[RMDB]
RNA sequence: GGGAACGACUCGAGUAGAGUCGAAAACACAACGAAUUAGAUUGCUACAGUCAUGACACAAGUUCUGAGCGGGUGAGGUUCAGGAACACACACUGAUCGCCGACGCGGAAGCGACCCGGCCACAGCAGGAAACAAUGAGAACCCGAUCGCAGAGGCCUACUUACUAACGAUUCGUCGUUAGUAAGUAAAAAGAAACAACAACAACAAC
Reactivity to DMS in 0.01 (KOAc 150mM, MgCl2 10mM, bicine 150mM(pH8.5), 24C), signal-to-noise 3, nucleotides 027 to 156: c070a160c060a060a160c070g020a110a090u020u000a070g020a100u000u000g010c010u000a130c050a100g000u010c040a120u010g020a140c040a120c040a090a040g020u010u000c020u020g010a190g010c040g020g000g000u010g010a100g010g010u000u000c040a100g010g000a090a070c040a090c110a130c210a050c020u000g020a050u000c050g020c020c010g020a170c020g000c030g020g020a150a150g010c020g000a050c110c030c000g020g000c000c040a090c030a050g000c030a080g040g010a140a080a060c030a060a110u010g000a170g020a120a090c000c000c010g010a050u010c030g000c040a130g000a130g000g000c090c080
Reactivity to 2A3 in 0.01 (KOAc 150mM, MgCl2 10mM, bicine 150mM(pH8.5), 24C), signal-to-noise 6, nucleotides 027 to 156: c090a010c040a070a110c070g090a040a060u130u060a110g080a140u100u130g040c050u090a080c030a070g060u070c050a100u110g060a040c010a010c010a120a080g030u090u020c040u060g020a020g030c000g020g020g030u100g040a120g040g030u040u020c010a010g030g090a100a010c020a000c000a000c000a000c030u030g020a260u050c040g000c000c010g030a030c000g020c010g030g100a060a050g000c010g030a080c110c080c000g010g000c010c020a020c010a010g210c040a000g000g030a020a030a010c010a030a050u160g010a030g010a150a010c000c010c000g030a060u030c020g000c030a010g010a020g070g000c010c010
Source information
This 207-nucleotide RNA was probed chemically with DMS and 2A3. DMS adducts were read by reverse transcription with MarathonRT. High 2A3 reactivity points to a flexible backbone, as in loops and unpaired stretches. The DMS profile rests on 5,982 reads.